Description: Structure probing data (DMS and 2A3) for a 207-nucleotide construct. For DMS, 4,399 sequencing reads were counted. Values cover nucleotides 27 to 156. The data come from the RNA Mapping Database (RMDB), library M2RFPK. The reactions ran in a buffer of 150 mM KOAc, 10 mM MgCl2 and 150 mM bicine (pH 8.5), at 24 C. For 2A3, 1,415 sequencing reads were counted.
[RMDB]
RNA sequence: GGGAACGACUCGAGUAGAGUCGAAAAGCUCUGUAAUGGGAUGGGAUCCGAAGCCCCAUUGAGGGAUAAUACAGGCUCUCCCAUCCAACUCAUAUUCCAACACGUCCUCGUCGUACAGAGUGGUAACUAAGGUAUAGCUCCUUCGGGAGCUAUACAACAAGUAGCUAUUCUUCGGAAUAGCUACUUGAAAAGAAACAACAACAACAAC
Reactivity to DMS in 0.01 (KOAc 150mM, MgCl2 10mM, bicine 150mM(pH8.5), 24C), signal-to-noise 2, nucleotides 027 to 156: g020c020u000c000u000g010u000a050a060u010g000g010g020a050u000g000g040g010a110u000c000c040g000a190a270g010c050c010c000c010a300u010u010g000a140g000g030g010a090u000a050a090u020a160c080a250g000g030c070u010c040u000c010c010c000a060u000c010c010a060a020c060u000c050a080u010a120u000u020c030c050a080a140c090a110c040g010u000c030c020u010c030g050u010c050g030u000a030c020a040g000a080g000u000g040g020u000a070a090c030u000a040a130g020g040u000a010u000a010g000c000u000c010c000u000u020c240g060g020g020a020g020c000u000a000u000a010c020a040a070
Reactivity to 2A3 in 0.01 (KOAc 150mM, MgCl2 10mM, bicine 150mM(pH8.5), 24C), signal-to-noise 3, nucleotides 027 to 156: g000c000u000c020u000g040u050a200a120u150g050g000g020a010u000g000g000g030a030u110c010c040g060a090a010g030c030c010c000c020a130u090u190g040a240g000g020g020a010u080a150a010u120a170c080a060g010g000c020u000c010u000c040c000c000a000u000c000c000a000a000c020u050c040a040u060a090u230u080c020c010a050a040c030a010c050g100u070c000c020u080c050g100u010c010g010u050a000c000a010g010a020g000u040g040g020u090a110a150c080u050a040a120g080g000u000a000u000a000g000c000u000c010c000u010u050c120g020g000g000a000g020c010u000a000u000a000c000a000a000